[RMDB]
RNA sequence: GGGAACGACUCGAGUAGAGUCGAAAAGACACUCUUAGCAGAUGACCUCCUCGUUGGUGAGUGUCGGUAAUGUUGUCAGUCACAGGCAACAGUUAACGAUCUGCGUAAAUAAAAAGAGAAGAACAAAAGGCUAUUAGUGAUUCGUCACUAAUAGCCUAAAAGAAACAACAACAACAAC
Reactivity to DMS in 0.01 (KOAc 150mM, MgCl2 10mM, bicine 150mM(pH8.5), 24C), signal-to-noise 3, nucleotides 027 to 126: g000a050c030a020c000u000c000u000u050a100g020c000a000g010a040u000g000a030c010c000u020c100c000u020c120g000u050u010g000g010u000g010a030g010u010g000u010c020g010g010u000a160a110u000g030u030u000g000u000c000a060g050u040c250a130c240a090g020g000c030a000a010c020a060g000u010u030a010a030c030g000a010u010c000u000g000c000g010u040a060a060a060u030a060a080a040a070a040g000a120g000a100a060g000a110a060c220a010a060a140
Reactivity to 2A3 in 0.01 (KOAc 150mM, MgCl2 10mM, bicine 150mM(pH8.5), 24C), signal-to-noise 4, nucleotides 027 to 126: g000a000c000a000c010u020c010u040u110a020g000c000a000g010a020u000g000a000c030c000u020c010c020u100c090g140u140u170g000g020u030g000a000g000u020g000u010c000g000g010u050a040a030u020g000u000u020g010u000c010a040g090u100c040a080c050a210g010g020c000a010a000c010a000g000u000u040a010a000c030g010a020u010c000u000g000c010g000u060a020a080a040u190a010a090a000a040a000g150a020g040a160a000g040a050a030c050a070a130a030
This 177-nucleotide RNA was probed chemically with DMS and 2A3.
The DMS profile rests on 5,397 reads.
It was measured as part of the RMDB library OK1LIB.
2A3 adducts were read by reverse transcription with SuperScript II with manganese.
The RNA was probed in 150 mM KOAc, 10 mM MgCl2 and 150 mM bicine (pH 8.5) at 24 C.